Overview:
Structure probing data (DMS and 2A3) for a 207-nucleotide construct. For 2A3 the reverse transcriptase was SuperScript II with manganese. For 2A3, 752 sequencing reads were counted. The reactions ran in a buffer of 150 mM KOAc, 10 mM MgCl2 and 150 mM bicine (pH 8.5), at 24 C. The data come from the RNA Mapping Database (RMDB), library OK3TST. DMS (dimethyl sulfate) methylates the pairing face of unpaired adenines and cytosines.

[RMDB]
RNA sequence: GGGAACGACUCGAGUAGAGUCGAAAAAGUCAUCCAGGCUGCCUGGAAGAUGCUAGAGAGAGAGAUGCAAGCCUGGGUGGAGGCUGCCACAGGCAGGCUUUCUGGAAGCAGUGCUCAAAUGGAGUUUGGAGUGCAGGAUGUUUAUGAGGAGCCAUGAUACUGCCGUAUAUUUCGAUAUACGGCAGUAAAAAGAAACAACAACAACAAC
Reactivity to DMS in 0.01 (KOAc 150mM, MgCl2 10mM, bicine 150mM(pH8.5), 24C), signal-to-noise 1, nucleotides 027 to 156: a170g000u000c000a050u000c030c010a010g010g000c010u000g020c080c040u040g000g000a110a090g010a110u000g000c000u000a180g020a160g000a190g030a180g020a130g040a080u000g030c020a170a120g020c000c000u000g020g000g040u010g010g010a080g000g000c050u020g030c010c020a080c020a120g040g040c030a090g030g000c060u000u000u000c010u020g050g000a080a110g030c000a120g030u000g020c060u000c040a090a050a090u010g010g010a100g020u000u000u000g040g010a120g030u010g050c040a070g010g000a080u000g030u000u020u000a080u010g000a070g000g000a110g020c000c020a060u000g020a300
Reactivity to 2A3 in 0.01 (KOAc 150mM, MgCl2 10mM, bicine 150mM(pH8.5), 24C), signal-to-noise 2, nucleotides 027 to 156: a000g110u100c000a010u030c000c000a010g000g010c020u010g000c010c020u080g020g060a060a030g080a030u180g030c100u200a040g000a020g000a010g010a000g000a000g000a130u070g090c040a130a030g010c030c010u010g010g020g000u010g000g000a000g030g030c000u060g030c030c000a120c050a080g010g050c010a010g040g030c000u060u150u030c060u120g100g000a060a020g030c010a010g040u030g080c010u040c090a090a080a090u080g010g030a040g000u000u060u080g060g030a080g000u040g060c020a020g000g050a000u030g070u100u210u050a050u090g030a020g050g010a000g030c010c000a010u090g040a090